[RMDB]
RNA sequence: GGGAACGACUCGAGUAGAGUCGAAAAACUCAGUGUUUGCUCGCGGGCAGCUGGUGAAGACCCCUGAGUGGACCCGAGGUGGUGCCUUUGAGAGGGGCCCCAACAUCCGCCCAUACGUGCUGCCAACAUUAUGUGAGAACUUCGGUUCUCACAUAAUAAAAGAAACAACAACAACAAC
Reactivity to 2A3 in 0.01 (KOAc 150mM, MgCl2 10mM, bicine 150mM(pH8.5), 24C), signal-to-noise 2, nucleotides 027 to 126: a020c030u040c030a060g030u060g080u140u270u140g060c060u060c030g060c030g050g040g000c000a050g000c050u060g020g090u130g040a050a060g200a150c030c030c000c040u020g060a050g020u070g030g000a050c010c030c120g060a150g000g130u190g010g000u130g210c020c020u070u140u100g140a160g000a020g000g000g030g000c070c000c010c000a010a010c010a040u040c010c040g060c090c020c000a050u070a100c070g030u050g010c020u040g000c020c000a060a000c010
Reactivity to DMS in 0.01 (KOAc 150mM, MgCl2 10mM, bicine 150mM(pH8.5), 24C), signal-to-noise 3, nucleotides 027 to 126: a060c010u000c020a060g020u000g000u000u000u010g010c030u000c070g020c190g030g010g000c040a050g020c050u000g010g020u000g010a140a170g010a100c070c020c060c020u010g020a040g010u000g000g000a120c030c070c030g000a160g000g020u010g020g020u000g000c000c000u000u020u000g000a150g010a080g000g000g010g030c020c010c010c030a080a110c060a070u010c030c030g030c030c020c010a060u010a080c080g010u000g010c000u000g000c040c060a110a110c180